[RMDB]
RNA sequence: GGGAACGACUCGAGUAGAGUCGAAAAAAAAAGAUAUGGAGAACUUGUCAGAAAGGUAUGGACAAUGUAUGUCGGAAACGACAUAUGAUCCAUACUUUCUUGGAUUUAGUUCUCCUAAGUCAAAAAACAACCUACAAUAGUUCGCUAUUGUAGGUUGAAAAGAAACAACAACAACAAC
Reactivity to DMS in 0.01 (KOAc 150mM, MgCl2 10mM, bicine 150mM(pH8.5), 24C), signal-to-noise 2, nucleotides 027 to 126: a020a120a060a100a090g010a030u000a300u010g010g000a020g000a050a020c000u010u000g020u010c000a060g030a030a020a000g000g000u010a010u000g000g010a050c050a050a020u000g000u000a000u000g030u000c000g020g000a110a060a160c010g020a020c010a000u000a000u000g000a060u000c000c000a010u010a020c000u000u000u000c040u010u010g020g000a010u010u010u000a000g010u000u000c010u000c000c000u010a010a060g000u000c030a000a040a100a080a110a130